Structure probing data (DMS) for a 177-nucleotide construct. The reactions ran in a buffer of 150 mM KOAc, 10 mM MgCl2 and 150 mM bicine (pH 8.5), at 24 C.
RNA sequence: GGGAACGACUCGAGUAGAGUCGAAAAGAUAUGGAACAGUGAUGACCCAUUACCGGUGGUGGAGUACGCGGUCGGAAACGACCGAUGUACGAUGAAACCACCGGUAAUGGCAAGCUGUUCCUAAGUCCGUGGGACUUAAGUUCGCUUAAGUCCCACGAAAAGAAACAACAACAACAAC
Reactivity to DMS in 0.01 (KOAc 150mM, MgCl2 10mM, bicine 150mM(pH8.5), 24C), signal-to-noise 1, nucleotides 027 to 126: g010a120u000a300u010g010g000a030a080c000a000g040u000g000a090u000g000a130c300c040c000a020u000u010a020c000c010g000g010u000g010g040u000g010g000a040g000u000a000c000g000c020g020g010u000c000g010g020a090a070a260c010g000a020c000c010g030a010u010g000u010a020c000g000a070u020g010a090a160a010c000c000a010c020c020g000g020u000a020a000u000g000g000c000a020a080g000c000u000g000u000u000c010c000u020a030a050g000u020c040